[RMDB]
RNA sequence: GGGAACGACUCGAGUAGAGUCGAAAAGUGUGAGAACGUACGUGAACGUGAUCGAACUCUCGAGUUCGAGUGAACACACACACGAGUGAGAACUCUCGAGAGAGUGAACGUGUGUGUACGUGAUCACUCGAGAUCUCACACUCUCGAGUGUGAGAUCACUCCCCGAGAUGUUCGCAUCUCGGGGAGUAAAAGAAACAACAACAACAAC
Reactivity to DMS in 0.01 (KOAc 150mM, MgCl2 10mM, bicine 150mM(pH8.5), 24C), signal-to-noise 1, nucleotides 027 to 156: g010u000g010u010g030a040g000a240a030c010g010u010a080c030g050u030g000a060a080c080g000u040g000a210u030c010g020a080a060c000u010c000u000c160g020a050g000u000u000c000g010a080g040u000g000a080a130c070a130c020a050c040a110c010a130c020g000a100g010u000g030a300g000a110a060c000u000c000u000c010g030a160g010a090g010a280g020u030g040a200a130c020g010u000g000u000g040u000g000u000a010c070g010u000g000a050u000c000a010c000u000c010g010a150g000a040u000c020u010c010a000c000a030c010u000c010u000c200g000a010g080u000g000u020g000a030g000a040u000c000
Reactivity to 2A3 in 0.01 (KOAc 150mM, MgCl2 10mM, bicine 150mM(pH8.5), 24C), signal-to-noise 3, nucleotides 027 to 156: g110u070g000u010g020a040g010a020a010c010g000u050a000c040g020u060g110a130a010c030g020u050g020a080u030c020g030a090a070c000u000c010u010c030g040a030g020u090u080c060g020a000g000u030g060a100a030c030a000c010a000c000a000c000a020c150g020a080g060u100g040a120g010a050a030c020u000c020u030c100g020a040g000a000g000a020g030u040g030a050a000c010g000u020g010u020g010u010g000u070a000c030g020u010g010a020u000c000a000c010u010c010g090a110g000a000u030c000u000c000a000c000a000c010u010c000u060c110g060a010g000u010g000u000g000a010g000a010u000c000